Structure probing data (DMS and 2A3) for a 207-nucleotide construct. Reactivities are given for positions 27 through 156. It was measured as part of the RMDB library OK3TST. For DMS the reverse transcriptase was MarathonRT. Reactivities are rounded to 0.1 and cut off at 0 and 3.
RNA sequence: GGGAACGACUCGAGUAGAGUCGAAAAAUACAGGGGCGGAGGAGCCAAGAUGGCCGAAUAGGAACAGCUCCGGUCUACAGCUCCCAGCGUGAGCGACGCAGAAGACGGGUGAUUUCUGCAUUUCCAUCUGAGAUGUGGCACCUGAGGCCCAGAGAGAGAUCAUUUUAAUCUUCGGAUUAAAAUGAUCAAAAGAAACAACAACAACAAC
Reactivity to DMS in 0.01 (KOAc 150mM, MgCl2 10mM, bicine 150mM(pH8.5), 24C), signal-to-noise 2, nucleotides 027 to 156: a060u000a110c030a120g020g020g000g040c030g010g020a130g020g000a300g000c010c000a050a130g030a110u000g000g000c150c020g000a070a140u000a110g020g000a060a070c090a130g010c020u000c010c020g000g010u010c020u000a060c050a140g030c010u000c010c030c030a270g020c100g040u000g000a100g020c040g000a100c100g010c010a100g030a020a190g010a070c050g000g030g030u020g000a210u000u000u000c010u000g000c070a060u000u000u000c000c020a020u000c030u030g000a170g040a080u000g040u000g020g030c040a010c050c010u010g010a120g060g020c020c000c000a200g000a140g000a130g020a180
Reactivity to 2A3 in 0.01 (KOAc 150mM, MgCl2 10mM, bicine 150mM(pH8.5), 24C), signal-to-noise 3, nucleotides 027 to 156: a010u140a030c060a060g010g000g010g030c010g020g070a080g030g000a010g000c010c010a010a050g060a070u050g010g000c020c060g010a040a080u160a220g030g040a050a060c020a060g020c030u040c020c080g000g020u000c010u040a050c020a010g000c020u010c010c000c010a090g030c090g100u210g030a080g070c050g080a040c020g000c060a030g030a170a010g070a030c020g000g010g030u030g070a140u040u110u100c030u020g000c030a030u040u030u010c070c070a120u100c120u140g010a040g000a110u100g040u100g040g010c020a030c040c020u030g020a050g050g020c000c000c060a030g030a000g000a000g000a000